This 177-nucleotide RNA was probed chemically with 2A3 and DMS. Conditions: 150 mM KOAc, 10 mM MgCl2 and 150 mM bicine (pH 8.5), 24 C. For DMS the reverse transcriptase was MarathonRT. For DMS, 3,598 sequencing reads were counted.

[RMDB]
RNA sequence: GGGAACGACUCGAGUAGAGUCGAAAAUAUGGCAUAUACAGUCUAUUCAAGAUGCUGAUGGUGCUGUUAAACAAUUGAAUGAGAUUGAUGUUAAUUCAAUCUGGCCCCUAGUCAUUGCUGCAAAUAGCCCGUAUAGGUAGUUCGCUACCUAUACGGGAAAAGAAACAACAACAACAAC
Reactivity to 2A3 in 0.01 (KOAc 150mM, MgCl2 10mM, bicine 150mM(pH8.5), 24C), signal-to-noise 3, nucleotides 027 to 126: u130a040u030g010g000c030a010u080a020u020a090c000a040g030u040c060u070a090u060u140c070a090a040g070a240u130g050c090u020g030a070u030g050g040u080g040c000u000g030u040u090a070a090a020c030a090a140u100u160g060a080a100u130g010a040g000a030u020u020g020a020u010g040u200u230a150a100u140u000c000a000a010u000c000u010g060g020c000c000c000c020u030a040g040u030c040a030u040u150g030c030u030g000c020a020a080a190u070a090g070
Reactivity to DMS in 0.01 (KOAc 150mM, MgCl2 10mM, bicine 150mM(pH8.5), 24C), signal-to-noise 4, nucleotides 027 to 126: u000a050u000g010g010c030a070u010a110u000a150c020a050g010u000c050u000a080u010u000c120a070a140g010a110u000g040c100u000g010a060u020g000g020u010g020c030u000g000u000u010a080a100a080c090a020a070u000u000g010a070a080u010g000a040g010a020u000u010g000a030u000g010u000u020a100a070u020u000c010a020a010u000c020u000g020g000c030c000c020c030u000a120g000u000c090a050u010u000g020c070u000g010c120a040a080a110u020a140g010